[RMDB]
Structure probing data (DMS and 2A3) for a 207-nucleotide construct.
Conditions: 150 mM KOAc, 10 mM MgCl2 and 150 mM bicine (pH 8.5), 24 C.
It was measured as part of the RMDB library M2RFPK.
RNA sequence: GGGAACGACUCGAGUAGAGUCGAAAAGAUUUGCCGUCGGCAUUUCCCCAGCAGCCAUGACCUACCAGGCUGCGGUGCGGCUCGCCGCACAGGUCAUCCCUCAUCGGGCGCGUCCUGCGUCCUUCCAAAAACUGACUAACCUUCGGGUUAGUCAGAAGUUAAUACCAUACUUCGGUAUGGUAUUAACAAAAGAAACAACAACAACAAC
Reactivity to DMS in 0.01 (KOAc 150mM, MgCl2 10mM, bicine 150mM(pH8.5), 24C), signal-to-noise 2, nucleotides 027 to 156: g010a080u000u000u000g020c060c030g040u010c110g050g030c040a120u010u010u000c000c020c020c020a150g020c050a060g010c010c010a170u000g020a120c080c040u000a170c070c070a240g010g000c020u010g020c000g000g020u000g000c000g040g070c080u000c260g000c040c000g000c030a060c030a000g020g020u010c020a240u000c030c020c040u000c100a050u020c100g020g000g010c030g040c000g010u000c120c010u010g030c030g000u010c010c000u010u000c000c040a080a070a110a110a220c000u000g010a020c010u010a000a010c000c000u000u000c250g030g020g000u000u010a000g010u010c000a010g010a030a080
Reactivity to 2A3 in 0.01 (KOAc 150mM, MgCl2 10mM, bicine 150mM(pH8.5), 24C), signal-to-noise 6, nucleotides 027 to 156: g020a030u040u030u040g020c040c090g230u200c190g050g000c010a010u020u020u040c010c000c000c020a040g000c000a000g000c000c020a150u150g010a030c020c010u160a280c110c050a010g000g000c000u000g000c000g000g000u010g000c010g010g000c080u100c140g140c020c000g000c000a010c010a010g010g020u000c010a080u060c020c030c010u100c050a160u160c090g000g010g000c010g000c000g060u230c020c130u150g000c000g010u000c000c010u030u070c020c010a020a080a040a080a100c000u000g000a010c000u000a000a000c000c010u020u060c210g080g000g000u000u010a000g000u010c000a000g000a000a000